Structure probing data (DMS) for a 177-nucleotide construct. The reactions ran in a buffer of 150 mM KOAc, 10 mM MgCl2 and 150 mM bicine (pH 8.5), at 24 C. Reactivities are given for positions 27 through 126. For DMS, 2,146 sequencing reads were counted.
RNA sequence: GGGAACGACUCGAGUAGAGUCGAAAACGAACAGUCAGGUUAACAGGCUGCGGCAUUUUGUCCGCGCCGGGCUUCGCUCACUGUUCAGGCCGGAGCCACAGACCGCCGUUGAAUGGGCGGAUGCUAAAUUAAUAAGACCCUUCGGGGUCUUAUUAAUAAAAGAAACAACAACAACAAC
Reactivity to DMS in 0.01 (KOAc 150mM, MgCl2 10mM, bicine 150mM(pH8.5), 24C), signal-to-noise 3, nucleotides 027 to 126: c110g000a050a020c020a010g010u000c180a060g000g020u010u000a060a150c070a140g000g040c000u020g030c020g000g020c020a210u010u000u010u020g010u000c010c000g030c020g010c000c000g000g030g020c100u000u010c080g010c020u000c190a060c020u000g000u000u000c020a100g000g000c060c050g000g000a120g020c040c070a170c130a080g000a130c020c020g000c010c010g000u000u000g010a120a110u010g010g000g020c000g000g010a050u000g000c080u010a060a100